Structure probing data (2A3 and DMS) for a 177-nucleotide construct.
The RNA was probed in 150 mM KOAc, 10 mM MgCl2 and 150 mM bicine (pH 8.5) at 24 C.
The data come from the RNA Mapping Database (RMDB), library OK2TST.
RNA sequence: GGGAACGACUCGAGUAGAGUCGAAAAUGCCGGAUCAGGACCGUCCGAACGAGGGCGUUUUCUCGUUUCAGGAUGAUGAUGAACAAUGGCUCUCGCUGCGCUAUGACCUGACUGCGCCGCUGGCGCAGAUUUACUAAUCGUUCGCGAUUAGUAAAUCAAAAGAAACAACAACAACAAC
Reactivity to 2A3 in 0.01 (KOAc 150mM, MgCl2 10mM, bicine 150mM(pH8.5), 24C), signal-to-noise 9, nucleotides 027 to 126: u100g010c010c000g030g010a060u040c030a030g040g100a070c020c010g010u000c010c010g010a020a020c010g000a020g010g060g030c070g030u050u010u110u020c010u000c000g010u020u050u120c100a080g050g020a040u040g020a030u070g020a020u090g030a050a030c060a110a100u100g070g000c010u010c000u010c030g040c040u060g000c020g000c030u050a040u120g040a060c000c020u030g060a100c040u050g000c010g010c010c020g240c220u190g010g000c020g000c010a000
Reactivity to DMS in 0.01 (KOAc 150mM, MgCl2 10mM, bicine 150mM(pH8.5), 24C), signal-to-noise 9, nucleotides 027 to 126: u010g010c020c010g010g010a120u000c030a050g010g010a090c110c020g010u000c050c010g010a040a030c030g000a030g000g010g020c300g010u000u000u010u000c010u000c020g010u000u000u010c080a150g020g000a040u010g010a100u010g000a100u000g010a050a090c160a090a090u010g010g010c020u000c030u000c060g010c050u000g010c070g010c040u000a060u000g000a110c030c030u000g000a140c080u000g000c020g020c000c020g030c200u000g010g020c000g010c020a020
DMS adducts were read by reverse transcription with MarathonRT.